RNA sequence: GGGAACGACUCGAGUAGAGUCGAAAACACUCCCACGACGCACCACAAUGCCAAUGCCGAAGGACGAAGGGAGGUUUCCCCAUGGACCGCUCAACAAUGCUCCGCGCCGGACUGUAAGAUUACCUCCGUUCUAGAUACUGUUCGCAGUAUCUAGAACAAAAGAAACAACAACAACAAC
Reactivity to 2A3 in 0.01 (KOAc 150mM, MgCl2 10mM, bicine 150mM(pH8.5), 24C), signal-to-noise 3, nucleotides 027 to 126: c090a050c030u000c000c010c010a010c040g060a020c040g050c040a070c030c000a040c040a120a090u140g070c050c020a100a070u140g030c010c020g080a080a020g050g030a030c050g020a080a050g040g010g000a010g000g040u030u030u000c000c010c000c030a050u090g030g000a020c010c040g000c020u040c040a060a110c020a030a090u110g000c000u030c020c000g010c020g020c020c000g020g040a030c000u040g050u100a070a030g020a150u030u150a060c010c010u080c010c050
Reactivity to DMS in 0.01 (KOAc 150mM, MgCl2 10mM, bicine 150mM(pH8.5), 24C), signal-to-noise 3, nucleotides 027 to 126: c220a180c120u010c000c000c000a140c090g000a100c090g020c010a080c070c040a090c110a100a120u010g010c010c080a060a090u000g000c000c010g020a120a060g000g020a100c050g010a100a130g010g010g010a040g010g010u010u000u000c020c010c010c070a120u000g010g010a040c030c010g000c020u000c020a090a090c080a060a080u000g010c030u010c030c030g030c030g020c040c040g010g000a080c060u010g000u010a040a110g000a100u000u000a120c030c020u000c070c120